[RMDB]
RNA sequence: GGGAACGACUCGAGUAGAGUCGAAAAGACGGAAAAGAUCGAACCUAAGAAGAUCAGGAAGUGUUAGCCGAAUCCUAGGGCUCCUAGGGACGCAUCGUCAGAUGCGAAAUAAACACUAACGUCGAAACGGUGGUAAAUAGUUCGCUAUUUACCACCGAAAAGAAACAACAACAACAAC
Reactivity to DMS in 0.01 (KOAc 150mM, MgCl2 10mM, bicine 150mM(pH8.5), 24C), signal-to-noise 5, nucleotides 027 to 126: g000a020c010g010g000a100a070a150a110g010a020u000c030g010a070a200c160c100u030a120a130g000a140a120g020a000u030c000a080g040g020a050a030g000u000g010u010u010a040g030c190c170g000a150a130u020c000c000u000a010g000g010g030c180u060c100c000u000a020g000g000g000a150c000g000c000a000u000c000g000u040c300a060g010a000u000g020c010g000a030a040a090u010a090a020a050c010a000c010u010a030a160c030g000u020c010g000a090a050a100
Reactivity to 2A3 in 0.01 (KOAc 150mM, MgCl2 10mM, bicine 150mM(pH8.5), 24C), signal-to-noise 3, nucleotides 027 to 126: g000a000c000g000g050a060a020a120a040g040a010u040c030g030a110a160c060c040u080a100a070g150a050a020g000a080u010c010a020g030g160a060a060g010u020g020u070u050a050g080c120c090g100a040a040u060c000c000u010a010g060g070g060c080u090c020c000u000a020g000g010g020a010c000g000c000a000u000c000g210u200c080a060g020a000u000g000c000g000a080a000a000u080a020a030a000c000a000c010u050a140a000c010g000u020c000g020a000a030a060
The data come from the RNA Mapping Database (RMDB), library OK1LIB. Structure probing data (DMS and 2A3) for a 177-nucleotide construct. Reactivities are given for positions 27 through 126. DMS adducts were read by reverse transcription with MarathonRT. The reactions ran in a buffer of 150 mM KOAc, 10 mM MgCl2 and 150 mM bicine (pH 8.5), at 24 C. For 2A3, 3,979 sequencing reads were counted.